RNA sequence: GGGAACGACUCGAGUAGAGUCGAAAACGGUGCAGCACAACAACAUACAGCAGCGCCUGCAGUGGGUAGUCCGAAUGCAGCAUGGCCUCGGUCAACCGCUCGAAGCCGUAAUCGGCGGCGGUGUCACGGUGCAACCUAUCUUCGGAUAGGUUGCACCAAAAGAAACAACAACAACAAC
Reactivity to DMS in 0.01 (KOAc 150mM, MgCl2 10mM, bicine 150mM(pH8.5), 24C), signal-to-noise 1, nucleotides 027 to 126: c050g000g180u000g090c000a070g010c000a000c160a080a030c070a060a080c230a040u000a090c080a000g100c000a000g000c000g010c000c060u000g000c020a040g000u000g000g000g040u040a070g020u000c040c020g060a060a050u030g010c110a080g000c060a080u040g000g030c000c000u030c000g000g080u000c020a090a120c030c000g020c000u020c220g010a060a110g000c010c000g120u060a140a040u000c060g000g020c000g040g030c000g010g000u000g100u010c080a080c130
Reactivity to 2A3 in 0.01 (KOAc 150mM, MgCl2 10mM, bicine 150mM(pH8.5), 24C), signal-to-noise 3, nucleotides 027 to 126: c050g010g000u030g020c030a000g010c050a020c000a020a170c010a050a030c010a120u230a010c040a030g010c010a010g010c040g000c000c010u010g010c010a080g000u050g020g010g010u060a080g070u000c040c030g050a080a070u140g020c040a020g000c070a150u070g120g010c030c000u070c070g000g000u040c080a140a090c020c000g010c010u060c100g090a070a040g000c000c000g070u180a120a070u270c000g060g000c010g000g000c000g010g000u000g000u000c030a040c180